[RMDB]
RNA sequence: GGGAACGACUCGAGUAGAGUCGAAAAAGUGCUAAGCAUAAUCCUAAAGUCAACCAUAUGCAUCAAUGACCUUAUCACUGUCAAAACAUUUAUCCAUGAAUCCAAGAUCCGGAGGUACCUUGUACGAAGUGCUAGGUAGCUUCGGCUACCUAGCACUAAAAGAAACAACAACAACAAC
Reactivity to DMS in 0.01 (KOAc 150mM, MgCl2 10mM, bicine 150mM(pH8.5), 24C), signal-to-noise 2, nucleotides 027 to 126: a130g000u010g020c040u000a080a110g000c040a040u000a090a100u000c030c010u000a080a120a100g020u000c040a060a130c130c060a080u010a050u000g010c060a070u010c090a050a060u000g000a020c060c020u000u000a030u000c040a050c080u000g030u000c040a050a110a060a040c070a100u000u000u010a050u010c020c050a050u010g020a080a050u010c060c030a040a100g010a070u020c070c030g000g010a060g000g020u000a040c050c060u000u000g020u000a080c110g050a100
Reactivity to 2A3 in 0.01 (KOAc 150mM, MgCl2 10mM, bicine 150mM(pH8.5), 24C), signal-to-noise 1, nucleotides 027 to 126: a010g040u060g000c020u060a120a000g020c010a070u090a080a020u060c010c010u020a120a030a000g060u040c030a070a050c050c020a090u070a010u210g000c020a050u070c040a020a210u090g020a040c010c010u070u100a060u060c010a020c070u060g070u140c040a030a090a080a040c050a030u070u080u180a050u020c020c030a070u070g100a040a000u000c020c000a010a020g120a050u090c050c050g010g020a000g000g000u020a030c010c040u070u040g080u030a060c030g090a110